Chemical mapping of a 177-nucleotide RNA with 2A3 and DMS. The data come from the RNA Mapping Database (RMDB), library TTRDES. DMS adducts were read by reverse transcription with MarathonRT. Conditions: 150 mM KOAc, 10 mM MgCl2 and 150 mM bicine (pH 8.5), 24 C.
RNA sequence: GGGAACGACUCGAGUAGAGUCGAAAAGAUAUGGACGUGAUAUGAAGCCUUGGACCUUUGUCGGAAACGACAAAGCUAGGCUGUAUACGUCCUAAGUCAAACAUUAGAUCGUUCGCGAUCUAAUGAACUGUCAGAACUUGUUCGCAAGUUCUGACAGAAAAGAAACAACAACAACAAC
Reactivity to 2A3 in 0.01 (KOAc 150mM, MgCl2 10mM, bicine 150mM(pH8.5), 24C), signal-to-noise 2, nucleotides 027 to 126: g010a000u030a030u110g030g020a000c050g030u220g300a060u050a040u130g300a190a050g000c030c060u140u300g030g060a150c010c000u000u010u000g000u020c010g020g040a050a030a030c000g020a000c030a030a000a000g000c000u030a000g010g040c030u050g000u020a020u010a000c000g010u030c000c000u000a040a030g020u000c050a070a160a240c000a010u000u000a000g010a010u010c020g020u130u060c300g000c010g160a000u000c000u030a010a000u010g000a090a070
Reactivity to DMS in 0.01 (KOAc 150mM, MgCl2 10mM, bicine 150mM(pH8.5), 24C), signal-to-noise 3, nucleotides 027 to 126: g010a030u000a150u020g000g010a000c000g030u000g000a030u000a020u000g020a150a070g020c010c000u020u000g060g010a060c300c020u000u000u000g000u010c000g040g000a040a050a150c000g010a000c000a000a000a000g000c010u000a010g040g030c010u000g000u000a010u000a020c000g000u010c000c000u000a020a080g000u000c010a150a120a300c010a010u010u000a020g000a000u000c000g030u000u000c290g010c010g010a010u000c000u000a000a000u010g000a100a140